Structure probing data (DMS and 2A3) for a 177-nucleotide construct. Conditions: 150 mM KOAc, 10 mM MgCl2 and 150 mM bicine (pH 8.5), 24 C. Reactivities are rounded to 0.1 and cut off at 0 and 3. For DMS, 692 sequencing reads were counted.

RNA sequence: GGGAACGACUCGAGUAGAGUCGAAAAGCAAAGAUCGAAAGAUCAAACGGUAGUAAAGAUGGUUUGAAAACCUCGCCUUCUACCAAGUGAAUAUCACAAUAGGCGAAAGUACGAAAGUACAAAAAAAGGGAAGUAAUAACUUCGGUUAUUACUUCCCAAAAGAAACAACAACAACAAC
Reactivity to DMS in 0.01 (KOAc 150mM, MgCl2 10mM, bicine 150mM(pH8.5), 24C), signal-to-noise 1, nucleotides 027 to 126: g020c160a120a160a090g000a000u010c000g010a150a150a160g010a000u010c000a050a050a170c120g020g000u000a020g010u010a010a010a000g000a060u020g020g040u020u040u020g000a180a090a120a040c000c000u000c000g010c000c010u000u000c000u000a000c010c000a070a150g010u000g000a150a130u000a140u010c070a110c120a120a020u010a000g000g010c000g000a060a100a110g000u000a000c010g010a090a000a130g010u000a000c020a000a000a020a050a020a160a170
Reactivity to 2A3 in 0.01 (KOAc 150mM, MgCl2 10mM, bicine 150mM(pH8.5), 24C), signal-to-noise 1, nucleotides 027 to 126: g080c040a130a000a000g010a000u030c010g060a080a000a010g000a000u040c000a000a020a030c050g000g020u000a000g010u010a010a030a000g090a120u180g040g100u040u090u220g250a160a140a010a000c000c010u010c020g010c000c000u000u030c010u000a010c000c030a030a030g010u020g040a100a080u080a090u300c000a000c010a100a200u080a190g000g010c000g020a090a000a010g000u000a000c000g030a130a030a000g000u020a010c050a000a200a000a000a040a010a010